[RMDB]
RNA sequence: GGGAACGACUCGAGUAGAGUCGAAAAGCAAAUUAGAGUGUUCAAAGCAGACGAUGUUUGAAUACAUUAGCAUGGAAUAAUAAUGUUGUCGUAUGACAUCCAUUGGAUUGUGUUAUAUGAUGUGGAUUACACAGAUUAACUUCGGUUAAUCUGUGUAAAAAGAAACAACAACAACAAC
Reactivity to DMS in 0.01 (KOAc 150mM, MgCl2 10mM, bicine 150mM(pH8.5), 24C), signal-to-noise 3, nucleotides 027 to 126: g010c080a060a070a120u010u010a110g000a140g020u000g010u000u000c030a030a060a070g030c040a050g010a160c170g000a090u000g010u000u010u000g000a060a040u000a030c010a070u000u000a070g030c040a050u000g010g000a090a050u000a040a050u010a040a090u010g000u010u010g010u000c010g020u000a040u000g010a020c030a030u000c080c020a130u000u010g020g020a160u010u010g030u000g010u000u000a020u000a020u000g010a060u000g020u010g020g000a190u000
Reactivity to 2A3 in 0.01 (KOAc 150mM, MgCl2 10mM, bicine 150mM(pH8.5), 24C), signal-to-noise 2, nucleotides 027 to 126: g020c020a000a010a080u160u030a110g010a010g160u000g040u070u060c020a030a010a100g010c030a010g020a130c170g050a090u000g050u020u030u060g050a040a040u050a010c040a070u050u110a020g050c070a120u080g060g110a100a070u120a230a070u080a060a080u120g070u090u070g020u000c000g030u040a010u040g010a000c000a030u040c050c070a110u080u190g070g010a090u060u180g050u000g030u130u000a010u030a020u010g060a040u110g070u070g070g030a000u020
Source: RMDB library RFMREP, as collected in RNAgym. This 177-nucleotide RNA was probed chemically with DMS and 2A3. For 2A3 the reverse transcriptase was SuperScript II with manganese. The reactions ran in a buffer of 150 mM KOAc, 10 mM MgCl2 and 150 mM bicine (pH 8.5), at 24 C.